About this RNA: This 177-nucleotide RNA was probed chemically with DMS and 2A3. The reactions ran in a buffer of 150 mM KOAc, 10 mM MgCl2 and 150 mM bicine (pH 8.5), at 24 C. For DMS the reverse transcriptase was MarathonRT. For 2A3 the reverse transcriptase was SuperScript II with manganese. The DMS profile rests on 1,555 reads.
RNA sequence: GGGAACGACUCGAGUAGAGUCGAAAAGAUAUGGACGUAUCCAGCGCACACCGAGGUCGGAAACGAUACAGUGUGAACUACGCUGAUACGUCCUAAGUCAAAACGCAAUCUCUUCGGAGAUUGCGAAGGAAGAUCAAUUCUUCGGAAUUGAUCUUCCAAAAGAAACAACAACAACAAC
Reactivity to DMS in 0.01 (KOAc 150mM, MgCl2 10mM, bicine 150mM(pH8.5), 24C), signal-to-noise 2, nucleotides 027 to 126: g000a060u000a300u000g000g000a000c000g000u000a000u010c160c070a000g010c010g000c000a000c010a020c000c000g000a300g000g000u000c010g000g000a150a090a180c020g000a040u000a050c020a020g030u000g010u000g030a110a060c090u000a230c030g020c000u000g000a010u000a000c000g010u000c000c000u010a000a000g000u010c050a070a040a130a160c030g000c000a000a000u000c000u010c000u000u000c210g020g010a020g000a000u000u000g010c000g000a000a050
Reactivity to 2A3 in 0.01 (KOAc 150mM, MgCl2 10mM, bicine 150mM(pH8.5), 24C), signal-to-noise 1, nucleotides 027 to 126: g010a020u070a010u170g010g020a000c010g020u000a000u070c210c170a010g000c020g040c000a000c000a000c020c010g070a120g080g000u010c010g020g060a090a040a060c020g000a000u010a040c010a010g000u000g010u010g010a000a010c040u190a040c070g000c010u000g000a010u010a010c010g000u000c010c000u010a010a000g010u030c010a030a040a110a000c000g000c000a000a000u000c000u010c000u020u110c300g190g000a000g010a010u000u000g000c000g020a010a020